[RMDB]
RNA sequence: GGGAACGACUCGAGUAGAGUCGAAAAGGUAAAUUAGCAACCACGCAAAUGUGGAAUGGUGAUAUCGAAGUAGAUAACCGGUGAGUUUUCCAUAUUCGCCUUUGCUAUUAAAAGCAUUCAAAGUGCACCUCCGUAAAAUCUUCGGAUUUUACGGAGGAAAAGAAACAACAACAACAAC
Reactivity to 2A3 in 0.01 (KOAc 150mM, MgCl2 10mM, bicine 150mM(pH8.5), 24C), signal-to-noise 1, nucleotides 027 to 126: g100g010u120a160a100a140u090u020a020g000c020a020a070c040c030a020c090g010c060a100a050a110u150g000u020g000g050a070a040u140g020g060u060g030a050u030a020u080c010g050a180a020g100u120a100g040a080u090a070a050c020c070g060g140u130g130a120g010u000u010u090u000c020c000a010u020a040u030u060c040g000c000c000u000u020u000g000c020u010a010u030u190a100a060a140a010g000c030a040u000u080c110a090a140a030g040u000g000c040a010
Reactivity to DMS in 0.01 (KOAc 150mM, MgCl2 10mM, bicine 150mM(pH8.5), 24C), signal-to-noise 1, nucleotides 027 to 126: g000g000u000a030a110a070u000u030a020g000c010a040a090c140c050a080c180g010c100a040a010a020u010g060u000g000g000a040a030u010g010g020u010g010a100u000a050u000c040g020a100a110g000u020a130g000a040u030a040a100c010c000g000g000u000g000a200g010u000u010u000u020c000c000a030u030a030u000u000c060g000c000c070u000u000u000g010c000u000a040u000u010a050a040a140a090g010c010a000u000u000c300a050a080a090g010u000g000c020a120